An RNA of 177 nucleotides, treated with 2A3 and DMS and read out base by base. 2A3 adducts were read by reverse transcription with SuperScript II with manganese. Conditions: 150 mM KOAc, 10 mM MgCl2 and 150 mM bicine (pH 8.5), 24 C. It was measured as part of the RMDB library TTRDES.
RNA sequence: GGGAACGACUCGAGUAGAGUCGAAAAGAUAUGGACAAGGUAUACUUCGAUGAAAUGGCUCGGAAACGAGCCAUGGAGAAGAUACUUGUCCUAAGUCAAAACAGUGGUAACUUCGGUUACCACUGAACUGUUAUUAACAGUUCGCUGUUAAUAACAGAAAAGAAACAACAACAACAAC
Reactivity to 2A3 in 0.01 (KOAc 150mM, MgCl2 10mM, bicine 150mM(pH8.5), 24C), signal-to-noise 9, nucleotides 027 to 126: g010a000u040a010u090g000g010a000c010a020a020g200g080u160a160u100a300c050u020u030c090g300a300u100g000a000a020a010u000g010g000c000u000c010g020g000a050a050a030c000g010a000g000c010c000a000u000g000g000a000g000a010a000g010a010u080a090c000u000u000g000u000c000c000u000a010a000g020u000c010a010a020a130a170c010a010g000u000g010g000u000a000a000c010u070u120c300g140g000u000u000a000c000c000a000c000u000g000a020a010
Reactivity to DMS in 0.01 (KOAc 150mM, MgCl2 10mM, bicine 150mM(pH8.5), 24C), signal-to-noise 9, nucleotides 027 to 126: g010a040u000a300u000g000g000a010c000a010a020g010g020u010a110u010a220c030u000u000c000g010a160u010g000a130a130a010u000g000g000c000u000c000g000g000a080a050a160c000g010a010g010c000c000a000u000g010g000a050g010a020a010g010a160u000a030c000u000u000g000u000c000c000u000a010a080g000u000c020a110a110a130a280c010a000g020u000g000g000u000a010a010c000u000u010c240g020g010u000u000a010c000c000a000c000u000g000a040a120